Notes:
An RNA of 177 nucleotides, treated with 2A3 and DMS and read out base by base. 2A3 adducts were read by reverse transcription with SuperScript II with manganese. High 2A3 reactivity points to a flexible backbone, as in loops and unpaired stretches. The data come from the RNA Mapping Database (RMDB), libraries RFM100 and RFMREP. Reactivities are given for positions 27 through 126.

RNA sequence: GGGAACGACUCGAGUAGAGUCGAAAAUUAAGGAGGUAACGAUAAGUUGAGUAAUUUUAACAUCAUGGGAUCUUUAAUGCUUAUAGCUGUUUUAGUUUUAGCAGUGUAUGUUAUUACCAAAGUUAUUGCUUAAUUUAUUGUUCGCAAUAAAUUAAGCAAAAGAAACAACAACAACAAC
Reactivity to 2A3 in 0.01 (KOAc 150mM, MgCl2 10mM, bicine 150mM(pH8.5), 24C), signal-to-noise 5, nucleotides 027 to 126: u140u050a060a010g050g020a020g030g010u070a040a030c010g010a040u010a170a070g020u020u020g030a030g040u080a040a060u030u130u040u100a060a020c020a030u050c020a040u060g060g040g060a040u020c040u020u170u160a100a020u050g020c000u110u080a080u060a170g020c010u020g140u130u060u070u150a090g020u040u060u050u100a000g010c010a000g000u010g020u090a030u040g030u060u020a030u020u040a070c040c000a020a010a080g040u060u060a110u050u020
Reactivity to DMS in 0.01 (KOAc 150mM, MgCl2 10mM, bicine 150mM(pH8.5), 24C), signal-to-noise 3, nucleotides 027 to 126: u010u000a040a080g000g010a050g010g010u000a100a070c070g010a040u000a050a060g010u010u000g010a050g020u040a070a050u020u020u010u010a010a020c030a040u010c150a070u000g000g010g000a040u020c030u000u010u010a030a030u000g000c030u000u020a050u020a090g010c010u010g000u000u010u010u010a060g010u000u010u010u000a040g000c000a030g000u010g010u010a020u000g010u000u010a020u020u000a120c060c020a060a060a110g000u010u000a080u010u000